This 207-nucleotide RNA was probed chemically with 2A3.
The 2A3 profile rests on 1,416 reads.
Source: RMDB library RNAMAK, as collected in RNAgym.
The reactions ran in a buffer of 150 mM KOAc, 10 mM MgCl2 and 150 mM bicine (pH 8.5), at 24 C.
RNA sequence: GGGAACGACUCGAGUAGAGUCGAAAACGACUGUGAUUCGUCACAGUCGAAAAAACCUUUGUGGAGGAGAGGCAACAGCUACAUAAAGUCCCAUUGGGACUGUGUAGACAUGCCUUGACUCCACUCUGGUAAAAACUAGUGGGUUCGCCCACUAGAAGUCGAGUCAAAGUUUCGACUUUGACUCGACAAAAGAAACAACAACAACAAC
Reactivity to 2A3 in 0.01 (KOAc 150mM, MgCl2 10mM, bicine 150mM(pH8.5), 24C), signal-to-noise 2, nucleotides 027 to 156: c000g000a000c010u000g000u000g020a020u010u090c190g050u010c100a000c030a000g010u020c020g010a010a000a000a000a000a000c020c010u020u010u010g000u000g010g000a000g000g000a000g000a020g020g000c010a050a070c070a240g020c010u010a000c000a010u150a100a230a020g010u000c080c020c130a300u170u300g010g010g000a000c000u000g000u010g000u000a000g050a100c000a050u030g010c000c000u010u000g000a000c010u000c000c000a000c000u000c000u010g000g040u060a090a050a010a010a010c000u000a000g010u010g010g010g020u050u010c290g120c000c000c040a010c000u040a000g030a030a020